[RMDB]
RNA sequence: GGGAACGACUCGAGUAGAGUCGAAAACACAUUUCAUAGAUCUCAGAGCUGAUGGCUGCCUUUCCGUAGCCCCCUAAAGAAUUCGGUUGUGCUUCUGUUUAAGUGUUAACGAUGUGAUUACCGAAUGGGUUUCAUUUCACUAAUGAUGCUGGAAGCACCUAAUCCCAGGAUUCGUCCUGGGAUUAGGAAAAGAAACAACAACAACAAC
Reactivity to 2A3 in 0.01 (KOAc 150mM, MgCl2 10mM, bicine 150mM(pH8.5), 24C), signal-to-noise 2, nucleotides 027 to 156: c080a010c000a030u030u220u120c070a090u090a260g080a160u030c020u000c110a040g010a040g010c050u020g010a100u140g040g030c030u040g000c020c000u100u120u090c080c060g020u040a030g030c000c000c000c000c000u190a150a110a030g140a070a090u160u110c080g060g000u010u000g020u020g020c000u010u000c070u060g190u050u110u080a090a050g070u060g040u010u060a050a050c070g020a000u020g000u010g040a080u020u050a030c020c040g030a080a130u180g110g070g040u060u060u060c020a020u000u030u060c010a000c070u030a000a120u100g050a030u000g000c060u020g020g040a080a000g020c000a030
Reactivity to DMS in 0.01 (KOAc 150mM, MgCl2 10mM, bicine 150mM(pH8.5), 24C), signal-to-noise 1, nucleotides 027 to 156: c080a070c120a070u000u000u010c040a120u000a160g000a080u010c010u000c020a110g000a150g000c020u010g010a160u000g000g000c020u000g020c020c050u000u000u020c100c080g000u000a150g070c030c000c020c010c000u000a130a060a130g000a030a090u000u000c050g010g010u000u010g040u010g000c000u000u000c020u000g010u020u010u000a090a170g010u000g000u000u000a020a080c070g010a080u000g020u000g000a080u010u010a070c030c000g000a070a090u030g000g030g000u010u000u020c030a090u000u000u000c060a080c020u000a030a030u000g010a080u000g050c020u000g020g000a060a100g020c070a210